Source: RMDB library OK2TST, as collected in RNAgym. Structure probing data (DMS and 2A3) for a 177-nucleotide construct. 2A3 is a SHAPE reagent: it acylates the 2'-hydroxyl of flexible nucleotides of all four kinds. Reactivities are given for positions 27 through 126.
RNA sequence: GGGAACGACUCGAGUAGAGUCGAAAAAUAAAAUCUUGUAGAUCUUGCUCGAACACUUGCGCCGUUUGGUAGGGUAAGCCGUAGAGUAGAUCAAUCACAAUCGGCGCUUGUUGGGUCGCGGCCAACAGAGCGUAUCCGUAUUCGUACGGAUACGCUCAAAAGAAACAACAACAACAAC
Reactivity to DMS in 0.01 (KOAc 150mM, MgCl2 10mM, bicine 150mM(pH8.5), 24C), signal-to-noise 1, nucleotides 027 to 126: a060u000a110a080a080a160u000c080u000u000g030u000a210g000a010u010c010u000u020g030c000u000c050g040a050a100c250a030c040u000u000g000c000g000c010c010g030u000u000u000g000g010u000a120g020g000g000u000a040a120g020c010c050g040u000a100g000a090g020u000a090g000a070u010c030a030a130u010c170a060c040a000a060u000c020g000g020c000g020c020u000u000g000u000u000g000g000g000u000c040g070c240g020g000c040c120a040a070c150a080
Reactivity to 2A3 in 0.01 (KOAc 150mM, MgCl2 10mM, bicine 150mM(pH8.5), 24C), signal-to-noise 1, nucleotides 027 to 126: a010u180a030a090a000a020u070c050u080u160g040u130a000g000a060u030c020u030u250g020c000u000c000g020a090a010c000a020c020u030u020g000c090g030c030c020g050u040u050u100g150g040u040a080g040g050g050u000a070a030g000c020c060g140u100a060g060a050g090u020a020g050a030u000c010a000a060u030c010a000c040a070a020u020c020g050g030c010g000c060u070u090g070u070u060g210g000g050u040c040g000c050g060g020c020c020a040a020c020a020